[RMDB]
RNA sequence: GGGAACGACUCGAGUAGAGUCGAAAACUGGGCCAUAACAUUGUGGAAUUCCAAACUUGGACUAGCUAUAGCCAGUGGCUCUACCAAUGCACCACAAUACUUGACAUCACAGAACUAUCCUAAUAUGGCACUCCAUUUCAUUCGUGAAAUGGAGUGCAAAAGAAACAACAACAACAAC
Reactivity to 2A3 in 0.01 (KOAc 150mM, MgCl2 10mM, bicine 150mM(pH8.5), 24C), signal-to-noise 2, nucleotides 027 to 126: c000u010g010g000g050c030c010a040u030a180a030c030a100u090u070g010u050g030g100a090a120u140u020c060c000a040a120a090c070u040u070g000g030a040c050u010a050g000c030u030a020u060a160g050c030c030a050g020u030g030g000c000u020c020u050a070c000c040a070a100u060g000c030a010c010c010a020c000a050a000u050a070c040u040u020g010a040c020a090u070c020a030c000a060g060a120a010c060u040a080u060c000c020u040a160a030u150a120u120g090
Reactivity to DMS in 0.01 (KOAc 150mM, MgCl2 10mM, bicine 150mM(pH8.5), 24C), signal-to-noise 1, nucleotides 027 to 126: c090u000g040g000g000c010c010a000u010a040a130c100a150u000u000g010u000g000g000a220a120u000u000c060c060a080a160a200c180u000u030g000g000a060c120u000a020g030c090u000a100u000a090g000c040c130a020g000u000g070g010c020u020c030u010a120c030c030a070a010u000g010c130a090c020c000a040c040a060a040u040a060c090u000u010g000a040c030a020u000c060a140c070a000g000a080a030c150u000a130u000c000c000u000a000a110u020a070u000g000
The record gives the reactivity of an RNA of 177 nucleotides to 2A3 and DMS. For DMS the reverse transcriptase was MarathonRT. It was measured as part of the RMDB library OK2TRN. The reactions ran in a buffer of 150 mM KOAc, 10 mM MgCl2 and 150 mM bicine (pH 8.5), at 24 C. For 2A3, 1,329 sequencing reads were counted. Values cover nucleotides 27 to 126.